[RMDB]
Structure probing data (DMS and 2A3) for a 177-nucleotide construct. Conditions: 150 mM KOAc, 10 mM MgCl2 and 150 mM bicine (pH 8.5), 24 C. For 2A3 the reverse transcriptase was SuperScript II with manganese.
RNA sequence: GGGAACGACUCGAGUAGAGUCGAAAAUCACUCAACCAAAUCCACGAGCACCAGAAGGGACACGUACCCAACACAACGGAUCGAAUCUUUGCCAUCGUUCGUGAACUGGCUGGCUCUGGAAAGGCAGCAGGUUAUUCCAAUUCGUUGGAAUAACCUGAAAAGAAACAACAACAACAAC
Reactivity to DMS in 0.01 (KOAc 150mM, MgCl2 10mM, bicine 150mM(pH8.5), 24C), signal-to-noise 6, nucleotides 027 to 126: u010c110a090c050u010c060a110a130c050c040a030a140a210u000c020c020a030c150g010a030g020c020a120c050c010a020g010a170a130g020g020g010a120c070a120c240g000u010a060c000c000c020a120a140c130a040c080a060a010c060g010g010a040u020c090g000a040a300u000c120u000u000u010g030c090c070a070u000c030g000u000u000c050g000u000g000a130a170c040u000g010g020c170u010g000g000c010u000c000u010g000g000a020a110a190g000g010c140a060g010
Reactivity to 2A3 in 0.01 (KOAc 150mM, MgCl2 10mM, bicine 150mM(pH8.5), 24C), signal-to-noise 8, nucleotides 027 to 126: u070c010a030c070u070c030a020a070c010c020a090a080a120u010c000c000a030c160g010a000g000c010a020c020c010a010g050a110a120g070g010g030a030c060a020c260g110u190a080c010c010c010a080a020c050a010c010a090a030c020g070g040a060u170c060g080a090a100u070c110u150u200u180g070c060c030a060u030c020g010u020u020c030g000u020g050a090a050c010u000g030g010c050u020g150g000c000u000c010u000g000g000a010a000a000g040g000c020a010g050